[RMDB]
RNA sequence: GGGAACGACUCGAGUAGAGUCGAAAAUUUUGAUUUAGACGAUUUUAUUGACGCACCAUGCUAUUGCUUUAACGCUGAGGGUGAUGCAUCCUGGUCUUCUACUAUGAUCUUCUCUCUUCACCCCGUCCACGUCUUACGUUCGCGUAAGACAAAAGAAACAACAACAACAAC
Reactivity to DMS in 0.01 (KOAc 150mM, MgCl2 10mM, bicine 150mM(pH8.5), 24C), signal-to-noise 9, nucleotides 027 to 129: u040u030u020u030g040a040u000u010u010a060g030a090c060g000a020u000u000u000u000a070u000u010g000a060c090g020c090a040c030c020a030u000g000c040u050a060u040u030g030c050u040u030u050a060a070c130g030c080u020g020a000g010g010g020u000g000a050u000g000c070a070u020c030c070u010g010g010u010c040u030u020c050u010a060c160u000a060u030g020a030u020c040u020u020c030u000c040u020c060u010u030c040a120c020c020c000c040g010u010c030c060a040c190
Reactivity to 2A3 in 0.01 (KOAc 150mM, MgCl2 10mM, bicine 150mM(pH8.5), 24C), signal-to-noise 9, nucleotides 027 to 129: u080u070u040u110g080a060u030u070u140a040g020a060c060g020a030u000u040u070u120a170u060u230g030a020c030g000c020a010c020c010a020u080g010c020u090a070u160u140g020c030u070u090u160a140a030c100g020c080u060g050a100g030g030g020u020g020a040u040g010c010a020u040c010c030u010g020g010u010c000u040u000c010u030a080c010u040a050u170g020a050u010c000u040u000c020u000c000u000c000u040u030c030a070c000c000c000c000g030u050c030c020a080c080